Structure probing data (2A3 and DMS) for a 207-nucleotide construct. Reactivities are given for positions 27 through 156. For 2A3, 21,549 sequencing reads were counted. The reactions ran in a buffer of 150 mM KOAc, 10 mM MgCl2 and 150 mM bicine (pH 8.5), at 24 C.

[RMDB]
RNA sequence: GGGAACGACUCGAGUAGAGUCGAAAACGCUGGGCGUUAAGCUCGGACAUUUGAGACUCUCUCGUUACCUGAAGCGCGCACGGGUAACGAGAGAGUCAAUGAUGAUGUUCCGAGCUAUACGCCUGUGCUGAAGCGCGCACGGCAACCGAAAGGUGCGGAUAGGAAUAUGGUUCGCCAUAUUCCUAUCAAAAGAAACAACAACAACAAC
Reactivity to 2A3 in 0.01 (KOAc 150mM, MgCl2 10mM, bicine 150mM(pH8.5), 24C), signal-to-noise 4, nucleotides 027 to 156: c030g000c010u020g000g010g000c010g010u010u020a090a010g010c000u000c000g000g000a000c000a000u010u010u050g090a060g000a000c000u000c000u000c000u000c000g000u000u000a000c000c000u020g060a240a050g010c000g000c000g000c010a010c000g010g000g000u000a000a000c000g000a000g000a000g000a000g010u000c000a000a000u000g000a000u000g000a000u010g050u250u100c010c000g000a000g000c000u010a000u010a000c000g000c000c000u010g000u000g000c000u040g020a140a030g010c000g000c000g000c020a030c020g010g000c010a030a020c000c010g060a080a040a020g020g000u030g010c020g040
Reactivity to DMS in 0.01 (KOAc 150mM, MgCl2 10mM, bicine 150mM(pH8.5), 24C), signal-to-noise 3, nucleotides 027 to 156: c060g050c040u000g010g010g020c000g050u000u000a220a170g020c000u000c000g000g010a030c010a020u010u000u000g010a190g020a030c000u010c000u000c000u000c000g030u000u000a010c000c010u010g010a040a060g030c040g020c030g050c030a300c040g010g000g000u000a010a010c000g010a020g000a010g000a000g000u000c020a010a050u000g010a140u000g000a030u000g000u010u000c000c020g000a050g050c020u000a020u010a020c020g010c010c000u030g000u000g020c030u020g000a080a070g030c000g000c000g020c000a300c060g020g000c020a080a120c010c030g010a190a130a140g000g000u000g020c020g000